[RMDB]
RNA sequence: GGGAACGACUCGAGUAGAGUCGAAAAAAACGAGAAAAAAAAAGAGAAAGAAAUGUAUAAGGGUCGAUGCAUCACUUGAAACAGAAAAGUCAAAUUGUGCAGACAAAAAAAGGUGUGACGGCUAAGCCUAUGCUAAUUUCUUCGGAAAUUAGCAUAGAAAAGAAACAACAACAACAAC
Reactivity to DMS in 0.01 (KOAc 150mM, MgCl2 10mM, bicine 150mM(pH8.5), 24C), signal-to-noise 3, nucleotides 027 to 126: a040a030a050c150g020a150g000a060a040a000a010a010a050a060a050a100g010a080g010a070a050a060g010a040a030a020u010g000u050a070u000a050a080g000g020g010u000c030g000a080u000g000c030a020u000c070a080c040u000u000g020a040a060a060c120a100g010a050a040a110a080g000u000c020a050a010a090u010u010g000u010g000c110a070g010a030c080a000a000a020a040a060a090a050g010g010u000g000u010g000a060c080g000g010c000u010a020a080g010c140
Reactivity to 2A3 in 0.01 (KOAc 150mM, MgCl2 10mM, bicine 150mM(pH8.5), 24C), signal-to-noise 4, nucleotides 027 to 126: a010a000a010c150g020a100g100a060a030a010a020a000a000a000a010a020g100a050g040a030a090a000g050a040a090a050u080g040u060a090u080a140a110g120g020g000u010c030g040a030u100g010c020a010u010c000a010c090u020u080g030a080a070a050c040a050g180a070a120a030a040g050u030c040a040a060a160u170u070g020u050g080c050a030g040a090c070a040a050a010a000a000a020a000g060g000u020g000u020g020a030c010g020g000c000u020a050a010g000c010